[RMDB]
RNA sequence: GGGAACGACUCGAGUAGAGUCGAAAAUCGGACUCCGUCGCCGCCUCCGAGAUGGCACGCGGGUGGAUUGUUGCGGCGAUCUGCGCGCUGGUGGUUGCGACGGCGCUGCGGCUGUACACUCGCUGGCUGCUAGUAAUGCUUUCGAGCAUUACUAGCAAAAAGAAACAACAACAACAAC
Reactivity to 2A3 in 0.01 (KOAc 150mM, MgCl2 10mM, bicine 150mM(pH8.5), 24C), signal-to-noise 6, nucleotides 027 to 126: u110c020g040g030a030c040u000c040c020g030u050c020g010c010c020g010c030c000u040c010c010g060a070g040a170u130g090g040c080a030c080g020c010g010g030g000u020g020g000a070u070u050g030u030u040g040c100g010g000c000g040a120u040c010u070g030c160g000c010g000c060u080g030g090u110g030g040u120u140g000c020g020a060c000g020g000c010g000c010u020g000c000g010g000c010u010g010u060a030c010a010c000u010c020g010c010u020g070g000c020
Reactivity to DMS in 0.01 (KOAc 150mM, MgCl2 10mM, bicine 150mM(pH8.5), 24C), signal-to-noise 2, nucleotides 027 to 126: u020c030g000g000a080c080u020c000c040g010u000c020g030c030c090g000c020c020u000c030c020g020a090g010a120u010g000g000c010a030c100g010c000g030g010g020u010g020g000a060u010u000g000u020u020g010c060g010g000c030g000a020u030c050u000g000c030g000c030g010c010u000g000g010u020g000g000u000u050g010c030g020a050c020g000g000c050g000c020u010g030c010g000g000c010u000g020u010a060c030a060c010u000c000g000c020u000g000g010c040